An RNA of 177 nucleotides, treated with DMS and 2A3 and read out base by base.
The DMS profile rests on 3,031 reads.
Values cover nucleotides 27 to 126.
In probing experiments dimethyl sulfate is read out at A N1 and C N3, which are open when not base-paired.
Source: RMDB library TTRDEL, as collected in RNAgym.
RNA sequence: GGGAACGACUCGAGUAGAGUCGAAAAGAUAUGGACGUAGACCGAUAAGAUGGUGUCGGAAACGACACGCAUCUUUUGACGGUCGAGGUCCUAAGUCAAAACUCACGACGGUUCGCCGUCGUGAGAAGAAAUUACCAGACUUCGGUCUGGUAAUUUCAAAAGAAACAACAACAACAAC
Reactivity to DMS in 0.01 (KOAc 150mM, MgCl2 10mM, bicine 150mM(pH8.5), 24C), signal-to-noise 3, nucleotides 027 to 126: g010a020u000a270u010g000g010a010c000g010u000a300g010a010c000c010g010a170u000a020a010g010a010u000g020g010u000g000u010c000g000g010a060a050a110c010g010a000c010a000c000g020c010a000u000c000u000u000u010u000g010a170c040g000g010u000c010g000a150g010g000u000c000c000u000a030a070g000u000c020a110a070a110a200c000u000c000a010c000g000a010c000g010g020u000u000c210g030c010c010g010u000c000g010u000g000a000g000a010a070
Reactivity to 2A3 in 0.01 (KOAc 150mM, MgCl2 10mM, bicine 150mM(pH8.5), 24C), signal-to-noise 1, nucleotides 027 to 126: g020a000u060a040u080g010g000a010c030g000u050a010g000a000c010c020g070a190u070a300a030g000a020u010g040g000u030g010u000c000g000g030a050a020a000c000g000a000c000a010c020g070c000a010u030c000u040u000u060u130g120a030c020g000g000u000c010g000a020g000g010u000c000c000u010a000a020g010u000c000a030a090a010a100c010u010c020a000c000g020a010c010g000g140u050u080c300g040c160c000g030u000c000g000u000g000a000g000a020a010